Structure probing data (2A3 and DMS) for a 177-nucleotide construct.
RNA sequence: GGGAACGACUCGAGUAGAGUCGAAAACGCAUGAUGUGCUCAACUGGAAUUACCAUCUGAACGCGGGAUACCGCAAGUCGAUGAAUUAAUGCUACGUGCAUUACCUCCGCUGUUACUCGUAUCACUGACUGCAUAUGAAAUUCGUUUCAUAUGCAGUAAAAGAAACAACAACAACAAC
Reactivity to 2A3 in 0.01 (KOAc 150mM, MgCl2 10mM, bicine 150mM(pH8.5), 24C), signal-to-noise 9, nucleotides 027 to 126: c060g020c020a040u060g010a040u050g070u060g040c020u030c050a060a090c050u060g030g040a050a030u080u040a140c030c010a020u020c050u110g040a070a020c040g000c010g020g010g050a100u150a260c010c000g010c030a040a040g090u040c030g020a030u030g030a040a110u100u060a040a010u020g010c010u030a040c180g120u210g020c010a000u000u020a020c000c010u030c020c010g010c050u050g030u080u060a070c020u010c040g050u060a060u110c040a050c100u060g070
Reactivity to DMS in 0.01 (KOAc 150mM, MgCl2 10mM, bicine 150mM(pH8.5), 24C), signal-to-noise 9, nucleotides 027 to 126: c100g010c080a060u010g010a050u000g020u010g010c050u010c060a060a080c080u000g000g010a090a060u010u010a080c130c010a040u010c020u010g020a070a100c230g000c020g000g000g010a170u020a100c010c020g010c030a050a070g000u010c070g010a040u000g000a090a100u010u000a040a010u010g010c010u010a070c200g010u010g000c010a020u000u000a030c100c020u000c020c040g020c050u000g000u010u010a060c070u000c070g010u000a050u000c040a070c110u010g000